[RMDB]
Description
The record gives the reactivity of an RNA of 207 nucleotides to 2A3. The data come from the RNA Mapping Database (RMDB), library OK3TST. The RNA was probed in 150 mM KOAc, 10 mM MgCl2 and 150 mM bicine (pH 8.5) at 24 C.
RNA sequence: GGGAACGACUCGAGUAGAGUCGAAAAGGUCUUUGUGUUCUCGGAGUGUGCCUCAUUUCGUGGGGCCUUUGGGACUUAGCCAGAAUAAUCAAGUCGUUACACGACACUAAGUGAUAAACUCAAGGUCCCUAAAUUAAUACGACUCACUAUAGGGAGACACCUUUUUCAACUUCGGUUGAAAAAGGUGAAAAGAAACAACAACAACAAC
Reactivity to 2A3 in 0.01 (KOAc 150mM, MgCl2 10mM, bicine 150mM(pH8.5), 24C), signal-to-noise 2, nucleotides 027 to 156: g100g020u020c040u070u040u070g030u020g020u100u000c020u010c040g020g010a050g040u100g050u190g040c030c010u060c060a060u040u220u200c170g030u070g000g000g000g020c000c000u020u030u030g030g000g020a040c000u030u000a000g000c010c010a030g160a140a160u270a110a120u120c170a170a010g010u000c010g010u030u140a140c160a010c240g040a000c030a000c010u030a020a000g020u000g130a150u070a280a080a050c030u040c040a000a000g000g000u010c000c000c050u050a110a040a000u100u050a010a000u030a060c000g020a000c000u000c010a000c000u010a010u000a020g010g020g000a010g010a000